[RMDB]
RNA sequence: GGGAACGACUCGAGUAGAGUCGAAAAACACUGGAACUAGUACUCUGGUCAAUGCGGAUUGCCUGUGGCGGUGUUGGCUGGACGACCGAGUGUCGGCGGAUACCUCCGGGCAGCUUGUCUGCUUGCACAAGUCUUAGGUGUUCGCACCUAAGACUUGAAAAGAAACAACAACAACAAC
Reactivity to DMS in 0.01 (KOAc 150mM, MgCl2 10mM, bicine 150mM(pH8.5), 24C), signal-to-noise 4, nucleotides 027 to 126: a050c080a040c050u010g010g010a120a070c050u020a100g000u030a110c210u010c020u000g000g010u000c030a030a020u030g040c030g030g010a060u010u020g020c010c020u010g020u030g010g020c100g030g010u000g000u000u020g020g040c010u000g000g010a050c030g000a070c160c120g000a130g020u030g000u000c050g010g000c040g000g000a090u030a080c020c010u010c020c040g000g000g020c010a020g010c140u040u020g000u020c010u010g000c010u000u000g000c120a220
Reactivity to 2A3 in 0.01 (KOAc 150mM, MgCl2 10mM, bicine 150mM(pH8.5), 24C), signal-to-noise 6, nucleotides 027 to 126: a000c050a010c040u050g050g030a040a040c020u040a030g050u140a070c030u010c030u070g020g030u070c050a010a090u140g010c000g070g040a100u090u080g030c020c010u180g070u230g090g000c050g030g000u030g010u060u030g140g000c020u060g100g020a020c010g030a040c010c090g130a110g030u150g030u030c020g010g010c000g000g020a010u030a080c010c000u010c010c000g000g010g000c020a010g000c050u080u150g060u040c010u020g020c000u010u060g000c060a030
Structure probing data (DMS and 2A3) for a 177-nucleotide construct. The data come from the RNA Mapping Database (RMDB), libraries RFM100 and RFMREP. Reactivities are given for positions 27 through 126. For 2A3 the reverse transcriptase was SuperScript II with manganese.